[RMDB]
RNA sequence: GGGAACGACUCGAGUAGAGUCGAAAAGAAGAGAAAGGAGACACAUGGACAGUCUCCAGAGGUUCCUAAGGGCUCGAUCGCGCCUGCCGGGAAUCAUGGACUCCCGGUUGUCCAUGAAAGAAGAAGAGGUGGUCAUUAAUUUCGAUUAAUGACCACCAAAAGAAACAACAACAACAAC
Reactivity to 2A3 in 0.01 (KOAc 150mM, MgCl2 10mM, bicine 150mM(pH8.5), 24C), signal-to-noise 3, nucleotides 027 to 126: g120a010a000g100a000g120a050a150a020g050g000a040g010a010c020a010c040a070u040g010g010a000c010a020g000u010c000u010c000c000a010g000a010g010g000u010u020c000c000u000a040a090g010g000g000c030u030c060g110a250u190c090g030c040g010c040c010u020g030c030c000g000g010g000a000a030u040c040a010u080g090g020a040c030u060c040c030c000g010g000u040u050g010u000c000c000a000u030g090a040a040a050g110a040a010g070a030a010g060a040
Reactivity to DMS in 0.01 (KOAc 150mM, MgCl2 10mM, bicine 150mM(pH8.5), 24C), signal-to-noise 2, nucleotides 027 to 126: g020a180a030g000a160g020a070a120a040g000g000a000g000a030c030a120c190a030u000g000g000a000c030a140g010u010c000u000c010c000a000g000a120g030g030u010u010c000c010u020a030a170g000g000g000c010u030c020g010a070u090c090g020c300g000c000c020u000g000c190c180g000g000g010a010a030u020c000a060u000g010g000a050c100u000c010c000c010g000g000u000u020g000u030c000c010a010u000g000a220a070a050g000a060a070g010a060a100g000a210
Structure probing data (2A3 and DMS) for a 177-nucleotide construct. The DMS profile rests on 3,373 reads. Values are in units of 0.01, from 0 to 300, in steps of 10. The data come from the RNA Mapping Database (RMDB), library OK1LIB. For DMS the reverse transcriptase was MarathonRT.